[RMDB]
Structure probing data (2A3 and DMS) for a 177-nucleotide construct. For 2A3 the reverse transcriptase was SuperScript II with manganese.

RNA sequence: GGGAACGACUCGAGUAGAGUCGAAAAAAAAAGAUAUGGAUGCCAACGAAUCUAUACGCACGAGGAUCAGAGCUCGGAAACGAGCUCUGGGAGUGUAGUAUAGACUAUUGGCAUCCUAAGUCAAAAACUUGUCUAUUAAGUUCGCUUAAUAGACAAGAAAAGAAACAACAACAACAAC
Reactivity to 2A3 in 0.01 (KOAc 150mM, MgCl2 10mM, bicine 150mM(pH8.5), 24C), signal-to-noise 2, nucleotides 027 to 126: a000a000a000a050a020g100a050u130a060u140g010g000a010u000g000c000c000a030a020c070g070a140a300u000c010u000a010u020a010c000g040c030a000c030g080a300g130g000a010u010c010a010g010a010g010c000u010c000g010g040a020a040a030c010g000a000g010c030u000c000u010g010g000g000a010g000u010g000u030a300g000u000a040u000a010g000a000c000u030a010u010u000g000g010c000a000u000c000c000u000a010a010g010u000c000a040a010a050a110a180
Reactivity to DMS in 0.01 (KOAc 150mM, MgCl2 10mM, bicine 150mM(pH8.5), 24C), signal-to-noise 3, nucleotides 027 to 126: a050a070a080a150a090g000a020u000a300u020g000g010a010u000g000c000c000a000a010c070g000a090a100u000c000u000a010u000a010c000g000c010a000c000g010a130g010g010a050u020c010a010g000a010g010c000u010c010g020g000a040a050a110c000g010a020g010c000u000c000u000g000g000g000a020g020u000g000u000a080g020u000a010u010a010g000a000c040u000a220u000u010g000g010c010a000u000c010c000u000a000a100g010u000c020a080a100a090a110a140
As a SHAPE reagent, 2A3 marks flexible, mostly unpaired nucleotides at the ribose 2'-OH. The reactions ran in a buffer of 150 mM KOAc, 10 mM MgCl2 and 150 mM bicine (pH 8.5), at 24 C. Source: RMDB library TTRDES, as collected in RNAgym.